Notes: This 207-nucleotide RNA was probed chemically with 2A3 and DMS. 2A3 adducts were read by reverse transcription with SuperScript II with manganese. The DMS profile rests on 4,032 reads.
[RMDB]
RNA sequence: GGGAACGACUCGAGUAGAGUCGAAAACAGCGCUUCGGCGCUGGAAGGGAUAUGGAAUACCGAAGAACUCCGAGGGAGAUAUGUGCCUCGGAAACGAGGCCAUAUCGAGGAUCUCGGAGGGAGGUAUUCCUAAGUCAUUUAGUGUCUUCGGACACAACUAUAAAUGAGCAUUCGUGCUCAUUUAUAGAAAAGAAACAACAACAACAAC
Reactivity to 2A3 in 0.01 (KOAc 150mM, MgCl2 10mM, bicine 150mM(pH8.5), 24C), signal-to-noise 4, nucleotides 027 to 156: c000a010g000c010g010c010u080u130c270g170g000c010g000c010u000g000g030a020a080g100g020g010a030u040a030u180g000g000a010a000u000a000c000c020g080a180a070g020a060a030c000u000c000c000g000a000g000g000g000a020g000a000u010a000u010g160u300g020c000c000u010c000g000g010a010a000a000c000g000a000g000g000c010c000a000u000a000u000c000g000a020g000g010a000u000c000u000c000g000g010a000g000g000g000a000g010g000u000a000u000u000c000c000u000a060a010g020u020c030a050u110u130u250a070g000u030g000u030c020u030u060c210g050g010a010c010a000c000a030a000
Reactivity to DMS in 0.01 (KOAc 150mM, MgCl2 10mM, bicine 150mM(pH8.5), 24C), signal-to-noise 2, nucleotides 027 to 156: c010a030g020c040g020c030u020u010c300g090g040c010g020c000u000g000g020a120a100g020g010g020a100u000a270u000g020g020a050a030u000a000c010c000g020a170a220g010a110a130c010u000c000c000g020a060g020g010g010a120g020a040u000a010u000g000u000g050c000c000u000c000g020g000a020a030a050c000g010a020g000g000c020c000a000u000a020u000c000g000a090g000g000a050u000c010u000c000g010g020a020g000g000g000a100g010g010u000a000u000u010c000c020u000a020a060g010u000c030a120u000u000u000a090g020u000g010u000c000u000u010c270g050g000a030c010a010c000a020a130
The RNA was probed in 150 mM KOAc, 10 mM MgCl2 and 150 mM bicine (pH 8.5) at 24 C.